[RMDB]
RNA sequence: GGGAACGACUCGAGUAGAGUCGAAAACCUAUCCAAAAAGAGAUCCCAUCUUGCACACUGUGCUAAUUUGAGAUUCUCAUGCCUCCUACUUGGAGAGAUCUGGACUAGAAGUCAGGGCAUCUGACUCAAUACAUUCGUCAGUUCGCUGACGAAUGAACACCCUUCUAGGGUUCGCCCUAGAAGGGUGAAAAGAAACAACAACAACAAC
Reactivity to 2A3 in 0.01 (KOAc 150mM, MgCl2 10mM, bicine 150mM(pH8.5), 24C), signal-to-noise 5, nucleotides 027 to 156: c000c000u000a050u050c020c010a080a040a000a040a000g020a000g010a010u000c020c020c010a010u010c020u010u040g000c010a010c050a060c170u300g000u010g010c050u140a070a060u000u020u040g010a010g010a040u300u110c010u000c020a030u150g040c010c000u020c000c010u150a300c150u180u290g000g000a010g000a020g010a030u060c040u070g000g010a010c020u040a080g020a140a000g080u000c000a000g020g080g190c080a120u100c070u010g000a000c000u000c030a050a100u120a110c000a000u000u000c000g000u000c000a000g030u030u110c170g010c160u010g000a000c010g010a000a000u000g000a010a010
Reactivity to DMS in 0.01 (KOAc 150mM, MgCl2 10mM, bicine 150mM(pH8.5), 24C), signal-to-noise 1, nucleotides 027 to 156: c020c010u010a170u000c010c020a000a090a130a170a140g000a060g000a050u000c000c000c000a030u000c090u000u000g030c000a040c030a230c100u010g000u000g000c010u000a010a020u000u000u000g010a050g010a040u020u000c000u000c000a100u010g000c000c030u010c010c010u010a130c230u010u010g010g010a100g010a130g000a040u010c010u010g000g000a080c170u000a080g000a110a080g000u010c030a020g010g030g000c080a100u000c000u000g000a070c050u000c020a070a070u000a100c010a040u010u020c020g000u000c000a010g040u000u000c300g020c000u000g000a000c010g030a020a000u000g010a100a140
The record gives the reactivity of an RNA of 207 nucleotides to 2A3 and DMS. DMS adducts were read by reverse transcription with MarathonRT. Source: RMDB library M2RFPK, as collected in RNAgym. Reactivities are rounded to 0.1 and cut off at 0 and 3. For 2A3 the reverse transcriptase was SuperScript II with manganese.